[RMDB]
Annotation: The record gives the reactivity of an RNA of 207 nucleotides to DMS and 2A3. DMS (dimethyl sulfate) methylates the pairing face of unpaired adenines and cytosines. As a SHAPE reagent, 2A3 marks flexible, mostly unpaired nucleotides at the ribose 2'-OH.
RNA sequence: GGGAACGACUCGAGUAGAGUCGAAAAGCACUGGCUAGAGCCUCCAAUACAAUGUUGAAUAGAAGUGGUAAGAAUGGGCCAGGCAUGGUGGCUCAUGCCUCUAAUCCUAGCACUUUGGGAGAGUAUGGUGGGCAGGUUACUUGAGGCCAGGAGUUUGCUUAGGUAGACGAUUCGUCGUCUACCUAAGAAAAGAAACAACAACAACAAC
Reactivity to DMS in 0.01 (KOAc 150mM, MgCl2 10mM, bicine 150mM(pH8.5), 24C), signal-to-noise 1, nucleotides 027 to 156: g010c050a040c000u000g000g100c000u000a240g010a090g030c000c000u000c070c000a040a110u000a110c130a050a100u010g020u000u030g090a110a190u000a170g050a020a050g020u000g020g000u000a040a190g020a030a070u010g010g010g000c040c120a040g030g010c020a030u010g040g020u000g020g000c160u000c000a000u000g000c010c020u000c010u000a070a080u000c010c010u000a050g020c040a020c060u000u000u010g000g020g020a180g000a120g010u000a050u000g020g060u000g020g050g050c020a070g010g010u000u000a050c050u000u050g020a140g000g000c010c000a040g020g000a100g020u030u000u000g000
Reactivity to 2A3 in 0.01 (KOAc 150mM, MgCl2 10mM, bicine 150mM(pH8.5), 24C), signal-to-noise 3, nucleotides 027 to 156: g010c010a040c100u040g000g010c040u050a040g030a030g070c010c010u030c040c010a050a050u070a070c060a050a140u140g090u170u170g100a190a150u110a150g060a070a020g010u020g040g070u150a060a100g030a080a060u090g010g040g010c060c060a010g010g010c010a010u060g060g000u060g040g000c020u050c120a020u020g020c030c000u020c020u050a070a030u000c000c010u010a000g020c000a040c080u070u050u050g080g050g000a110g000a020g060u030a030u100g090g030u110g000g030g010c060a000g070g010u080u110a070c040u040u100g060a060g020g080c000c000a020g000g010a060g030u060u130u110g040
It was measured as part of the RMDB library OK3TST. For DMS, 2,822 sequencing reads were counted.